[RMDB]
RNA sequence: GGGAACGACUCGAGUAGAGUCGAAAAGAUAUUUCAUAUAAAUGGAAUCAUACUAAGUGGUUUAUUUUUGCUUUGUUUUAAAGUCAGCUUUCAGGGAUAUGUAGAUAAAGCUUACAGAUAUAGGGAGAGGGAAGCUUAUAUUGUAGCUGAUUAUGAAUCCUCUAAUCCUCUUCGGAGGAUUAGAGGAAAAAGAAACAACAACAACAAC
Reactivity to 2A3 in 0.01 (KOAc 150mM, MgCl2 10mM, bicine 150mM(pH8.5), 24C), signal-to-noise 1, nucleotides 027 to 156: g000a000u150a100u130u160u230c000a030u170a100u010a300a240a050u030g010g010a000a000u080c010a020u040a130c090u060a060a150g010u100g020g050u100u070u150a180u040u230u010u000u000g060c080u030u070u010g020u160u090u060u080a020a050a000g030u070c000a000g070c000u100u080u070c090a030g000g090g000a040u070a010u220g020u080a010g000a110u080a070a010a000g000c000u030u000a010c000a010g110a000u040a030u060a140g020g070g000a070g020a000g040g000g050a000a010g000c000u070u030a070u030a070u130u180g010u040a000g000c000u030g000a000u060u090a110u300g110a000a020

The record gives the reactivity of an RNA of 207 nucleotides to 2A3. The RNA was probed in 150 mM KOAc, 10 mM MgCl2 and 150 mM bicine (pH 8.5) at 24 C. The 2A3 profile rests on 479 reads.